Source: RMDB library OK2TRN, as collected in RNAgym. The record gives the reactivity of an RNA of 177 nucleotides to DMS and 2A3. High DMS reactivity at an A or C suggests that its Watson-Crick edge is free. 2A3 adducts were read by reverse transcription with SuperScript II with manganese. For DMS the reverse transcriptase was MarathonRT. Values cover nucleotides 27 to 126.

RNA sequence: GGGAACGACUCGAGUAGAGUCGAAAAUCGAGAUCGCGGACGUCGACGGCGAAAUGCAGUUCGAAGUGCUGUCGACCAACGGCGACACGUUCCUCGGCGGCGAGGACUUCGAUCAGCGCAUCAUCGAGCAGCGAUUAGGAUUCGUCCUAAUCGCUGCAAAAGAAACAACAACAACAAC
Reactivity to DMS in 0.01 (KOAc 150mM, MgCl2 10mM, bicine 150mM(pH8.5), 24C), signal-to-noise 2, nucleotides 027 to 126: u000c010g000a110g010a110u000c020g010c020g030g020a250c210g040u000c050g000a010c040g020g010c010g010a080a060a150u000g010c020a100g030u010u000c100g010a030a080g000u000g010c070u000g110u000c000g000a010c030c070a060a180c050g010g030c010g000a050c110a090c040g060u010u000c000c010u010c040g000g010c210g020g020c010g000a120g040g010a050c050u000u000c020g020a040u000c050a020g000c020g030c120a080u000c090a080u000c030g000a190
Reactivity to 2A3 in 0.01 (KOAc 150mM, MgCl2 10mM, bicine 150mM(pH8.5), 24C), signal-to-noise 2, nucleotides 027 to 126: u060c020g000a010g020a050u040c010g000c060g060g070a030c020g020u000c000g000a040c010g010g020c030g030a050a070a070u300g050c060a050g110u160u210c060g040a080a010g060u070g110c010u000g010u000c000g070a080c000c000a040a060c070g070g010c000g000a000c000a000c080g000u050u030c030c000u000c050g070g000c060g040g070c040g020a030g010g000a010c000u000u000c040g060a080u060c030a050g040c020g000c050a030u040c010a050u050c010g020a030